Chemical mapping of a 207-nucleotide RNA with 2A3.
RNA sequence: GGGAACGACUCGAGUAGAGUCGAAAAUUCUUCGGGUUUCCUUCCUCUGCUUGCGGCCUCGCCCGGAGUCUUCGAAUCCAGCGCAGGUUCUGACGCGACCGGUGGCAUCACCGAGUUGCUCAAGCCUCAAUCCGCUUUUUCUUCAUCUUAGGCUUGGCUUAGCAAACGAGUUCGCUCGUUUGCUAAGAAAAGAAACAACAACAACAAC
Reactivity to 2A3 in 0.01 (KOAc 150mM, MgCl2 10mM, bicine 150mM(pH8.5), 24C), signal-to-noise 1, nucleotides 027 to 156: u060u000c010u100u070c030g010g000g000u020u050u040c010c000u040u080c010c010u090c050u020g070c040u100u070g050c100g050g040c030c020u030c040g010c000c000c010g000g010a010g030u030c010u070u100c040g110a110a060u040c070c030a030g050c040g030c060a050g010g000u060u020c070u000g020a040c110g010c000g010a010c000c000g040g000u070g050g070c110a280u300c000a260c000c000g100a190g060u000u000g000c020u000c010a020a000g000c010c010u030c020a020a110u060c030c010g000c000u090u070u030u030u010c040u110u110c030a160u000c050u040u110a050g010g020c000u030u020g000g000

The data come from the RNA Mapping Database (RMDB), library VIROID.